[RMDB]
Source: RMDB library M2PK50, as collected in RNAgym. An RNA of 177 nucleotides, treated with DMS and 2A3 and read out base by base. For DMS, 1,836 sequencing reads were counted. The 2A3 profile rests on 3,593 reads.
RNA sequence: GGGAACGACUCGAGUAGAGUCGAAAACCUUGGUCCUUCGGGACCAAGGAAACCCGAAGACAUACACACUGUGGGCGGCGAGACAAUCCACAAGAGUCGCUAAAAGCGUCUGGUUCGCCAGACGCAACAUAGCAGUAAGCUUCGGCUUACUGCUAUGAAAAGAAACAACAACAACAAC
Reactivity to DMS in 0.01 (KOAc 150mM, MgCl2 10mM, bicine 150mM(pH8.5), 24C), signal-to-noise 3, nucleotides 027 to 126: c020c000u000u000g010g020u000c000c000u000u020c190g020g040g020a010c010c000a010a010g010g000a040a060a090c010c010c020g000a150a100g000a120c080a070u010a060c100a100c100a130c150u020g000u000g020g000g010c300g010g000c070g030a090g000a120c070a090a080u020c010c050a050c040a040a130g010a160g000u000c040g010c060u000a050a050a070a090g000c000g010u000c000u000g000g000u000u020c180g040c000c010a000g010a000c000g000c010a010a030
Reactivity to 2A3 in 0.01 (KOAc 150mM, MgCl2 10mM, bicine 150mM(pH8.5), 24C), signal-to-noise 3, nucleotides 027 to 126: c000c000u000u010g000g010u000c000c010u020u030c230g100g000g010a010c000c000a010a000g020g000a040a050a000c020c000c000g030a060a020g070a040c040a040u210a050c030a010c010a010c110u050g000u050g030g010g020c040g040g050c060g020a050g020a130c050a050a070u020c020c000a040c000a070a010g020a020g030u030c030g030c070u100a100a060a060a100g010c000g000u000c000u000g020g020u050u040c140g050c050c000a010g010a000c000g000c000a010a000
For 2A3 the reverse transcriptase was SuperScript II with manganese. Reactivities are given for positions 27 through 126. For DMS the reverse transcriptase was MarathonRT.